[RMDB]
RNA sequence: GGGAACGACUCGAGUAGAGUCGAAAAAGGUUCGCUGUGGUGCAACUCUUAUUAGUAACUAAUCCAAAGCAAGCAUAGGAGAACAGGUUUUUAACUAUUUUUAGGCAGAUAAAAAAUAGUAUUUGACAAAAUCGAUUGUCGUUCGCGACAAUCGAAAGUUAUACACAGAGUUCGCUCUGUGUAUAACAAAAGAAACAACAACAACAAC
Reactivity to DMS in 0.01 (KOAc 150mM, MgCl2 10mM, bicine 150mM(pH8.5), 24C), signal-to-noise 1, nucleotides 027 to 156: a070g000g000u000u010c070g000c030u000g010u000g020g000u000g010c020a040a070c060u000c030u000u000a100u000u000a060g040u000a050a100c050u010a070a090u010c070c060a060a170a140g000c010a040a130g030c100a090u010a080g000g010a050g000a030a080c050a140g000g000u040u010u010u000u000a070a080c010u000a010u000u000u010u000u000a090g000g000c050a130g000a140u060a010a000a040a010a010a010u000a030g010u000a150u000u000u000g020a080c080a060a080a070a190u000c000g000a040u000u000g020u000c010g000u010u000c300g000c010g000a020c010a000a010u020c000g000a010a040a060
Reactivity to 2A3 in 0.01 (KOAc 150mM, MgCl2 10mM, bicine 150mM(pH8.5), 24C), signal-to-noise 4, nucleotides 027 to 156: a000g040g010u030u030c010g020c020u000g010u010g030g020u010g010c030a050a070c010u030c030u100u180a160u070u080a110g050u060a100a090c040u030a070a060u030c050c040a090a020a030g010c030a040a030g000c000a040u080a060g010g030a080g030a060a020c060a050g060g020u000u000u010u000u050a040a010c000u000a020u000u020u000u010u030a040g070g000c000a020g050a110u120a060a050a000a000a000a000u000a000g010u010a110u070u070u130g040a060c080a010a140a010a100u020c000g000a000u000u000g000u000c000g000u010u040c200g010c010g040a000c000a000a000u000c000g000a000a000a000